[RMDB]
RNA sequence: GGGAACGACUCGAGUAGAGUCGAAAAGAAGUUCUACGUCAUCAAUGCCCACAAGAUCGCGGAAGAGGUGGGCAUGCCCGGCAGGAUCAACGUGAUCAUGCAGACCGCCUUCUUCAAGAUCGCCGGCCUCCUUACGACCAUUCGUGGUCGUAAGGAGAAAAGAAACAACAACAACAAC
Reactivity to DMS in 0.01 (KOAc 150mM, MgCl2 10mM, bicine 150mM(pH8.5), 24C), signal-to-noise 2, nucleotides 027 to 126: g010a150a100g010u000u000c020u000a030c120g000u000c040a060u020c060a150a100u000g000c010c010c060a120c270a070a130g000a060u000c000g010c300g010g010a020a040g010a060g000g000u020g010g000g010c030a010u000g010c050c010c050g020g020c010a050g020g020a030u000c000a090a240c170g010u020g000a030u000c010a050u000g000c000a050g000a040c000c040g040c020c010u000u010c000u000u000c010a070a140g000a060u000c010g000c090c070g000g000c170
Reactivity to 2A3 in 0.01 (KOAc 150mM, MgCl2 10mM, bicine 150mM(pH8.5), 24C), signal-to-noise 1, nucleotides 027 to 126: g040a030a020g040u040u050c050u100a160c070g140u050c010a060u070c000a030a210u110g030c000c000c000a030c000a010a080g000a080u050c050g010c170g160g000a050a010g030a020g010g000u010g010g000g080c040a010u020g000c000c000c000g010g020c020a030g000g050a010u020c020a030a270c170g160u130g050a070u030c010a000u040g000c000a000g020a120c000c000g020c020c000u130u160c030u010u000c080a010a060g020a050u050c020g040c040c030g090g000c010

Chemical mapping of a 177-nucleotide RNA with DMS and 2A3. The 2A3 profile rests on 920 reads. High 2A3 reactivity points to a flexible backbone, as in loops and unpaired stretches. The DMS profile rests on 1,117 reads.